[RMDB]
RNA sequence: GGGAACGACUCGAGUAGAGUCGAAAAGAUAUGGACGUACUAAGGGAGAAGUAUGUCGGAAACGACAUGACUUCUUUGAUCUUGGUACGUCCUAAGUCAAAGCCACUUAUGUUCGCAUAAGUGGCAAGUAUGGAAGGAUGUUCGCAUCCUUCCAUACAAAAGAAACAACAACAACAAC
Reactivity to DMS in 0.01 (KOAc 150mM, MgCl2 10mM, bicine 150mM(pH8.5), 24C), signal-to-noise 4, nucleotides 027 to 126: g000a050u000a280u010g000g010a030c010g020u000a000c000u010a010a010g000g000g010a050g010a030a010g020u000a020u000g010u000c010g010g000a070a080a160c000g010a000c000a010u000g000a030c000u000u010c000u000u000u010g000a060u010c010u000u000g010g010u000a000c020g010u000c000c000u000a000a050g000u000c030a110a140a190g000c000c000a010c010u000u000a010u000g010u000u020c280g020c010a000u000a010a020g020u000g000g000c000a000a010
Reactivity to 2A3 in 0.01 (KOAc 150mM, MgCl2 10mM, bicine 150mM(pH8.5), 24C), signal-to-noise 3, nucleotides 027 to 126: g020a000u040a010u110g000g000a010c000g000u000a000c010u010a030a020g110g050g040a170g040a040a020g020u010a000u000g010u000c000g000g010a060a030a010c010g020a000c010a000u060g180a040c000u010u040c030u080u060u120g030a020u020c000u000u000g000g000u010a000c000g000u000c010c000u000a010a000g000u000c020a000a050a070g010c000c000a010c000u010u000a010u040g060u060u090c300g000c200a000u000a010a010g000u000g000g010c000a010a000